[RMDB]
Conditions: 150 mM KOAc, 10 mM MgCl2 and 150 mM bicine (pH 8.5), 24 C. Structure probing data (2A3) for a 177-nucleotide construct. Values cover nucleotides 27 to 126.
RNA sequence: GGGAACGACUCGAGUAGAGUCGAAAAGCGGUUCUUGUCUUUAUCAUUCUUGUGUAUUGUUGUCAGCGCUACUACAAGAGUGAUAAUUUCAAGGACUGUUUUUAUUUCCUCUAAAACAUCUUUCACUGAAUUCAAUGAACUUCGGUUCAUUGAAUUCAAAAGAAACAACAACAACAAC
Reactivity to 2A3 in 0.01 (KOAc 150mM, MgCl2 10mM, bicine 150mM(pH8.5), 24C), signal-to-noise 4, nucleotides 027 to 126: g020c010g000g000u000u000c000u000u010g000u000c000u000u010u000a000u000c000a000u000u000c000u000u000g000u000g010u010a050u070u100g140u050u100g260u180c070a040g040c030g010c050u010a010c000u030a020c000a000a010g000a000g000u000g000a000u000a000a000u000u000u000c010a000a000g010g000a000c000u000g000u020u000u000u000u000a060u000u010u000c000c000u030c040u060a080a090a010a030c030a100u030c040u040u090u070c080a090c110u040
2A3 adducts were read by reverse transcription with SuperScript II with manganese. The data come from the RNA Mapping Database (RMDB), libraries RFM100 and RFMREP.